Source information
Source: RMDB library OK2TRN, as collected in RNAgym. Chemical mapping of a 177-nucleotide RNA with DMS and 2A3. The reactions ran in a buffer of 150 mM KOAc, 10 mM MgCl2 and 150 mM bicine (pH 8.5), at 24 C.
RNA sequence: GGGAACGACUCGAGUAGAGUCGAAAAGUUCUGUUUUCUAAAGGAGCAGAAGGACAGGUCUCUGAGACAGGAUCGUUGUCCCUACAGGAGGAACAGUGGCCUUGCUUCUUAGACGGUCUUCACUGUGACACGUAUCCCUUUUCGAAGGGAUACGUGUAAAAGAAACAACAACAACAAC
Reactivity to DMS in 0.01 (KOAc 150mM, MgCl2 10mM, bicine 150mM(pH8.5), 24C), signal-to-noise 2, nucleotides 027 to 126: g020u010u000c020u020g000u020u000u000u000c040u020a070a120a190g010g020a100g010c000a000g010a150a050g000g000a030c030a100g000g010u000c000u000c020u010g000a040g000a040c030a010g000g000a030u000c010g000u010u000g000u000c000c010c020u000a110c300a170g000g000a040g030g000a030a020c020a010g000u000g010g000c060c020u020u000g000c020u030u000c010u000u010a040g020a020c090g010g000u000c010u000u000c110a100c040u010g010u000g010
Reactivity to 2A3 in 0.01 (KOAc 150mM, MgCl2 10mM, bicine 150mM(pH8.5), 24C), signal-to-noise 1, nucleotides 027 to 126: g020u030u000c010u030g070u080u070u070u040c100u120a160a110a060g080g030a100g010c000a020g010a050a020g010g000a000c000a070g090g190u000c000u000c000u030g020a020g000a080c000a010g000g010a010u040c020g040u030u040g010u000c010c000c000u050a130c120a250g150g120a040g030g030a070a000c010a030g000u030g030g010c000c000u040u070g010c010u060u000c010u010u000a010g020a020c010g000g000u020c000u000u060c170a120c060u070g000u050g080

Reactivities are given for positions 27 through 126. For DMS the reverse transcriptase was MarathonRT.